[RMDB]
RNA sequence: GGGAACGACUCGAGUAGAGUCGAAAAGAGAUAAGUAUCUAAUGCGUGUCAUUAGGUCACCUCGGUAUGAUUAGUGUGAGAGCUAGGAACCGUAGGGGUGUUCUCAAAGGAAUCCUUUGCAGUGACGGAUGGUACAUAUGUUCGCAUAUGUACCAUCAAAAGAAACAACAACAACAAC
Reactivity to DMS in 0.01 (KOAc 150mM, MgCl2 10mM, bicine 150mM(pH8.5), 24C), signal-to-noise 5, nucleotides 027 to 126: g000a050g010a060u000a050a080g020u010a010u000c010u000a010a010u000g010c050g020u010g020u020c000a020u000u000a010g000g010u000c010a050c010c010u000c020g000g010u010a100u000g000a100u010u000a010g010u000g000u010g020a270g000a230g010c010u000a020g000g000a140a040c020c010g010u010a060g000g010g000g010u010g010u000u000c010u000c030a050a070a140g010g010a090a110u000c020c010u000u010u010g020c110a090g010u000g010a120c210g000
Reactivity to 2A3 in 0.01 (KOAc 150mM, MgCl2 10mM, bicine 150mM(pH8.5), 24C), signal-to-noise 3, nucleotides 027 to 126: g040a010g010a010u070a160a050g060u150a030u010c000u010a010a020u030g040c150g100u160g130u190c010a000u000u010a010g030g000u000c000a020c000c000u020c000g000g000u300a210u120g010a030u020u040a010g000u010g030u020g150a100g010a030g040c010u010a010g000g020a020a010c010c000g010u040a020g040g000g010g010u030g040u080u000c030u010c000a060a040a000g100g030a080a070u030c010c020u040u090u140g080c120a090g030u040g140a040c070g070